Source information
The data come from the RNA Mapping Database (RMDB), library RSTRND. This 207-nucleotide RNA was probed chemically with 2A3 and DMS. 2A3 adducts were read by reverse transcription with SuperScript II with manganese.
RNA sequence: GGGAACGACUCGAGUAGAGUCGAAAAAAACACAGUUGUGGCCGAGUUAAUAGCCCUGGGUAUAGUAACAAUGUUGAAUAUGACUCUUAAUUGAGGAAAUGGGUGAUCCGCAGCCAAAUCCUAAGGACAUUUUAUUGUCUAUGGAUGCAGUUCACAGCAUAUAUGUGCUGUUCGCAGCACAUAUAUGAAAAGAAACAACAACAACAAC
Reactivity to 2A3 in 0.01 (KOAc 150mM, MgCl2 10mM, bicine 150mM(pH8.5), 24C), signal-to-noise 3, nucleotides 027 to 156: a000a000a000c090a000c030a020g030u040u040g020u050g000g030c020c000g040a030g010u060u170a070a100u030a150g010c020c010c010u040g060g030g020u100a130u050a090g100u050a090a050c050a150a110u080g030u040u070g070a060a040u150a040u170g080a030c010u000c000u070u090a100a100u210u100g010a010g020g000a020a070a110u100g020g020g030u000g030a060u000c030c050g000c040a020g030c020c000a120a130a000u020c010c000u040a100a100g020g000a010c010a020u110u200u130u150a150u280u050g020u000c000u010a050u080g000g000a000u020g000c020a010g000u040u060c090a050c010a070g090
Reactivity to DMS in 0.01 (KOAc 150mM, MgCl2 10mM, bicine 150mM(pH8.5), 24C), signal-to-noise 3, nucleotides 027 to 156: a070a030a060c050a050c070a110g010u000u000g040u000g020g010c020c060g000a110g020u010u000a080a090u010a130g000c020c010c010u000g030g000g000u010a080u020a100g010u010a080a060c030a040a090u010g000u010u000g030a100a080u000a080u000g020a100c010u000c010u000u010a050a170u000u000g020a060g000g000a070a080a070u000g010g030g010u000g000a030u000c010c020g000c010a080g050c030c030a040a100a070u000c030c050u010a080a150g000g010a010c010a020u010u010u000u000a110u030u000g030u000c010u000a250u030g010g010a050u000g020c020a040g000u010u000c020a040c030a140g000